[RMDB]
The record gives the reactivity of an RNA of 207 nucleotides to 2A3 and DMS. The RNA was probed in 150 mM KOAc, 10 mM MgCl2 and 150 mM bicine (pH 8.5) at 24 C.
RNA sequence: GGGAACGACUCGAGUAGAGUCGAAAAGAUAGUUUUGUCAGUUUUGAGGACUGGUUAGACAAUAAGCACUUAACUAAGACAUUAUCUAUAUCUAGAUGUGAAGAGGACAUGGUUAACUUCUUACAAUCCUCUAAAGAGGAUAUUGCCACUAUCAACGUACUGAUGCAGAUUUCGAUCUGCAUCAGUAAAAAGAAACAACAACAACAAC
Reactivity to 2A3 in 0.01 (KOAc 150mM, MgCl2 10mM, bicine 150mM(pH8.5), 24C), signal-to-noise 5, nucleotides 027 to 156: g060a030u120a020g010u040u020u030u100g030u040c020a030g010u030u050u070u100g100a100g020g060a040c030u030g070g020u080u080a050g030a030c040a050a070u110a120a020g020c030a020c040u030u060a040a020c030u090a100a030g060a010c010a030u100u090a030u120c060u050a020u000a050u170c060u040a050g020a080u020g050u030g040a050a030g010a020g060g000a010c020a080u060g020g010u020u020a060a040c020u060u050c000u010u050a020c010a030a060u000c010c000u030c020u080a090a110a140g040a000g030g000a000u040a060u040u120g010c000c010a050c030u050a050u160c030a050a070c050g070
Reactivity to DMS in 0.01 (KOAc 150mM, MgCl2 10mM, bicine 150mM(pH8.5), 24C), signal-to-noise 3, nucleotides 027 to 156: g000a130u000a060g020u000u000u000u000g000u000c030a170g020u000u000u000u000g040a130g020g010a110c060u000g030g010u000u010a070g020a080c070a080a090u000a070a100g000c040a110c060u010u000a040a070c050u000a060a140g020a050c040a040u000u000a030u010c040u000a040u000a060u000c060u000a080g010a100u000g010u020g030a130a100g010a140g010g010a050c060a070u010g020g020u000u000a050a040c050u010u000c040u010u010a050c030a070a080u000c000c010u010c010u000a040a070a200g020a070g000g010a030u000a010u000u000g010c020c010a050c060u000a090u000c040a040a190c160g010